[RMDB]
RNA sequence: GGGAACGACUCGAGUAGAGUCGAAAAAAGUCCAUAUGCCCACCUUCGCUGGGCCGGGUGGAUGCUUAUACAUGCUAUGGAUGCCUACAUUUGAAAUAAUGUAGAUGCCUAAUACUCUCUCUCAGGGAGAGAGUUUAGAUGCCUCCAAAGGUCAUGCUCAUUAGUAGUGCUUCGGCACUACUAAUGAAAAAGAAACAACAACAACAAC
Reactivity to 2A3 in 0.01 (KOAc 150mM, MgCl2 10mM, bicine 150mM(pH8.5), 24C), signal-to-noise 3, nucleotides 027 to 156: a000a000g040u030c020c010a030u030a020u140g010c010c000c000a020c010c050u160u180c140g050c120u110g010g000g000c040c000g040g010g000u010g000g010a020u140g020c040u110u100a080u050a180c100a030u150g020c010u030a010u030g010g000a010u030g010c010c000u000a000c000a000u010u040u100g140a140a120a080u180a020a000u040g000u000a010g000a040u070g010c000c010u030a070a040u130a160c000u010c000u000c000u000c010u030c150a150g010g300g000a000g000a000g000a000g000u000u000u000a000g000a000u040g030c000c020u020c030c020a060a070a040g040g010u110c030a040u090g000c010
Reactivity to DMS in 0.01 (KOAc 150mM, MgCl2 10mM, bicine 150mM(pH8.5), 24C), signal-to-noise 2, nucleotides 027 to 156: a030a070g000u000c000c020a000u010a120u010g000c010c020c000a020c040c050u000u010c150g030c080u000g010g040g040c000c010g000g030g030u010g020g000a150u000g020c040u000u000a110u000a060c040a030u000g010c030u000a220u000g000g010a040u000g030c060c000u000a010c010a030u000u010u000g010a200a090a130u000a030a020u010g000u010a010g010a180u010g030c080c010u000a010a040u000a070c010u010c000u010c000u000c010u000c150a300g030g000g000a020g000a020g010a000g010u000u000u000a010g010a130u000g000c030c020u030c010c010a030a090a150g010g010u000c010a040u000g000c050